Chemical mapping of a 177-nucleotide RNA with DMS and 2A3. For DMS, 19,910 sequencing reads were counted. The reactions ran in a buffer of 150 mM KOAc, 10 mM MgCl2 and 150 mM bicine (pH 8.5), at 24 C. The data come from the RNA Mapping Database (RMDB), library TTRDES. Reactivities are given for positions 27 through 126. For 2A3 the reverse transcriptase was SuperScript II with manganese. For 2A3, 55,507 sequencing reads were counted.

RNA sequence: GGGAACGACUCGAGUAGAGUCGAAAAGAUAUGGAAUUAGUAGGGAGCUACUGAUCGGAAACGAUCAUUAGCAUCGAUCUACGAUUCCUAAGUCAAAAGCUAGUAGUGUGUUCGCACACUACUAGCAGAGUAAAUAACGGUUCGCCGUUAUUUACUCAAAAGAAACAACAACAACAAC
Reactivity to DMS in 0.01 (KOAc 150mM, MgCl2 10mM, bicine 150mM(pH8.5), 24C), signal-to-noise 7, nucleotides 027 to 126: g000a010u000a040u010g000g000a010a010u000u000a070g020u000a010g010g000g010a040g030c000u000a010c140u010g000a010u000c000g020g000a010a010a030c000g010a000u000c000a000u000u000a010g020c000a300u010c240g000a050u000c010u000a010c000g000a020u000u000c000c000u000a010a100g000u010c010a150a090a140a130g010c000u000a010g010u000a010g010u000g020u000g020u000u020c290g020c010a010c000a010c000u000a000c000u000a000g000c000a020
Reactivity to 2A3 in 0.01 (KOAc 150mM, MgCl2 10mM, bicine 150mM(pH8.5), 24C), signal-to-noise 6, nucleotides 027 to 126: g000a000u010a000u060g000g000a000a020u020u020a160g010u010a010g020g020g070a110g010c000u000a000c010u010g000a000u000c000g010g000a010a010a000c000g000a000u010c000a010u000u010a000g000c000a020u300c070g020a030u000c000u010a000c010g000a000u000u010c000c000u000a000a010g010u000c020a030a030a040a220g000c000u000a000g000u000a000g000u000g010u010g030u060u100c300g080c150a000c000a000c000u000a000c000u000a000g010c000a000